[RMDB]
RNA sequence: GGGAACGACUCGAGUAGAGUCGAAAAUGGCAGAAGAAGUACGACGCCAUGAUUGCCGACAUCGCGCUCGUGGACACUCGCCGGAUUUUAGAUGUUCUGAAAAACGAGGUCCUCAACCUCCACAAUGCCAAACAUUAACUUUCGAGUUAAUGUUUGGAAAAGAAACAACAACAACAAC
Reactivity to DMS in 0.01 (KOAc 150mM, MgCl2 10mM, bicine 150mM(pH8.5), 24C), signal-to-noise 5, nucleotides 027 to 126: u000g010g020c010a070g020a160a100g000a130a100g000u010a060c070g000a190c100g010c010c020a020u000g000a120u000u000g010c030c040g020a090c080a080u000c110g000c040g020c090u000c030g020u000g000g000a050c060a090c050u000c060g030c060c020g010g000a110u000u000u000u000a050g010a120u010g010u010u000c020u000g010a030a060a040a060a110c110g000a050g020g000u000c040c020u000c090a060a150c030c000u000c010c100a080c190a090a060u020g020
Reactivity to 2A3 in 0.01 (KOAc 150mM, MgCl2 10mM, bicine 150mM(pH8.5), 24C), signal-to-noise 5, nucleotides 027 to 126: u010g000g000c030a020g040a220a010g020a160a010g170u150a050c030g010a030c040g020c010c000a010u030g030a090u010u200g080c040c010g020a040c010a110u040c020g000c000g010c060u040c030g030u050g010g040a030c050a050c130u020c020g030c010c000g040g020a050u040u070u030u070a090g020a110u150g110u150u050c040u100g060a080a000a030a010a010c030g000a010g000g030u060c040c020u070c030a040a050c000c010u010c020c010a040c050a070a110u180g050